[RMDB]
RNA sequence: GGGAACGACUCGAGUAGAGUCGAAAAUCUGGCCUCUUAUAUCUGGACCCAGGACGUGAGCAAAGUGUUGCGCCUGGCGCGUGGGAUUGAAGCCGGCAUGGUCUUCGUCAACACCCAGAACGUCCGCGCCCUGAUGGGAUUUCGAUCCCAUCAGGGCAAAAGAAACAACAACAACAAC
Reactivity to 2A3 in 0.01 (KOAc 150mM, MgCl2 10mM, bicine 150mM(pH8.5), 24C), signal-to-noise 1, nucleotides 027 to 126: u000c060u060g070g030c000c000u070c070u210u120a100u080a040u150c020u040g050g010a200c000c000c000a010g030g000a020c040g050u070g050a080g150c080a070a040a040g300u140g050u130u050g000c010g030c000c000u010g000g000c050g030c070g030u000g000g050g000a000u050u180g090a000a000g020c020c000g020g150c080a160u300g050g020u050c000u050u000c000g020u050c030a080a080c000a030c000c000c000a000g040a100a030c000g020u000c020c000g080c150
Notes
Chemical mapping of a 177-nucleotide RNA with 2A3. 2A3 adducts were read by reverse transcription with SuperScript II with manganese. Conditions: 150 mM KOAc, 10 mM MgCl2 and 150 mM bicine (pH 8.5), 24 C.